[RMDB]
RNA sequence: GGGAACGACUCGAGUAGAGUCGAAAAGGGGUCUCUAAAGCUUCCGAGACCCAUUGUCAGCUCUGAAGCCUCCACGGAGCUUGGAUUUAUGGGUCGUUUGACGAAGCUGGAGACGGAGGCACCCAAACCACAUUACGACUUCGGUCGUAAUGUGGAAGCUUUUAAGAUAGUUCGCUAUCUUAAAAGCAAAAGAAACAACAACAACAAC
Reactivity to DMS in 0.01 (KOAc 150mM, MgCl2 10mM, bicine 150mM(pH8.5), 24C), signal-to-noise 1, nucleotides 027 to 156: g010g030g010g020u000c020u020c020u000a100a060a040g010c020u000u030c000c020g000a170g000a030c000c010c010a000u010u000g000u000c070a050g020c010u000c010u010g030a070a170g000c010c020u000c030c020a300c010g020g000a010g000c020u000u020g050g000a140u020u000u000a020u010g030g000g010u000c010g020u000u000u010g020a230c080g000a040a040g030c000u000g030g020a050g010a030c010g000g030a030g110g050c000a150c000c010c000a040a080a260c010c000a010c000a000u000u000a020c010g000a030c000u000u010c290g040g010u000c010g030u000a000a000u000g000u010g000g010a030a090
Reactivity to 2A3 in 0.01 (KOAc 150mM, MgCl2 10mM, bicine 150mM(pH8.5), 24C), signal-to-noise 3, nucleotides 027 to 156: g060g010g020g010u000c000u000c010u080a300a160a050g000c010u010u000c050c000g030a030g000a030c000c000c000a000u000u050g050u040c020a010g010c000u000c000u020g100a130a040g020c000c000u000c020c000a010c040g010g000a000g000c040u040u110g050g030a010u050u260u300a120u120g000g020g020u030c010g080u170u200u300g050a030c020g000a000a000g000c000u000g000g000a000g000a000c010g010g000a000g000g000c000a050c000c000c030a030a040a040c000c000a000c010a000u000u000a000c000g010a000c000u030u080c300g120g000u000c000g000u000a000a000u000g010u000g000g000a000a000